[RMDB]
Source: RMDB library OK2TST, as collected in RNAgym. An RNA of 177 nucleotides, treated with DMS and read out base by base. The reactions ran in a buffer of 150 mM KOAc, 10 mM MgCl2 and 150 mM bicine (pH 8.5), at 24 C. Values are in units of 0.01, from 0 to 300, in steps of 10. In probing experiments dimethyl sulfate is read out at A N1 and C N3, which are open when not base-paired. DMS adducts were read by reverse transcription with MarathonRT.

RNA sequence: GGGAACGACUCGAGUAGAGUCGAAAACAUUUUUUCAAGAUGAUGUCCUCCUUUUUUUCAAGCCAAACUCGGAAGCCCUUUUGUAACUGGCCGCGUCAGUCUCGGAUAUGCUUCACCCAUCCGGCAAAUAAAUCCCUCAUUUCGAUGAGGGAUUUAUAAAAGAAACAACAACAACAAC
Reactivity to DMS in 0.01 (KOAc 150mM, MgCl2 10mM, bicine 150mM(pH8.5), 24C), signal-to-noise 2, nucleotides 027 to 126: c050a030u000u000u010u020u020u010c140a090a160g010a020u010g000a080u000g010u020c010c040u000c030c040u000u000u000u010u000u010u000c080a070a070g010c040c040a020a070a100c090u000c050g030g000a120a150g000c030c030c030u000u000u000u000g010u010a080a040c090u020g000g040c040c020g020c120g000u010c040a080g000u020c070u000c090g000g010a040u000a060u010g010c040u000u010c070a100c060c010c030a060u020c030c070g020g020c110a040a090